[RMDB]
RNA sequence: GGGAACGACUCGAGUAGAGUCGAAAAUACAAUAGCCUAGGGAACCAAGCUAAGAGGUUGGAAGUCCAACGGUAGAGGGCUUGGUUCGCAGCUGCUCUAGAAGAGGUCCCACUCCCUACGCCGCAAAGUAGUAAGGUAGCUUCGGCUACCUUACUACAAAAGAAACAACAACAACAAC
Reactivity to DMS in 0.01 (KOAc 150mM, MgCl2 10mM, bicine 150mM(pH8.5), 24C), signal-to-noise 1, nucleotides 027 to 126: u000a130c180a100a090u010a030g020c010c020u000a090g020g020g000a000a030c000c000a020a000g000c000u000a130a060g040a140g000g000u000u060g000g020a300a110g010u030c020c000a030a000c000g010g040u000a130g000a160g010g000g000c000u000u000g000g010u000u000c010g040c040a120g000c030u000g000c060u010c020u000a040g000a060a160g000a080g010g000u000c010c020c030a210c060u000c040c010c010u000a090c040g030c010c050g040c110a090a040a050
Reactivity to 2A3 in 0.01 (KOAc 150mM, MgCl2 10mM, bicine 150mM(pH8.5), 24C), signal-to-noise 1, nucleotides 027 to 126: u190a020c060a020a200u100a120g050c030c000u100a060g070g070g010a000a000c010c030a010a000g010c020u050a080a080g100a090g100g130u050u030g020g010a240a130g100u110c060c010a010a000c010g100g030u160a090g040a070g170g000g040c040u000u000g000g000u000u000c010g000c050a030g000c030u020g000c000u000c020u100a110g040a220a030g060a180g010g040u010c010c000c000a010c000u030c010c000c000u030a050c060g070c010c010g020c090a070a130a000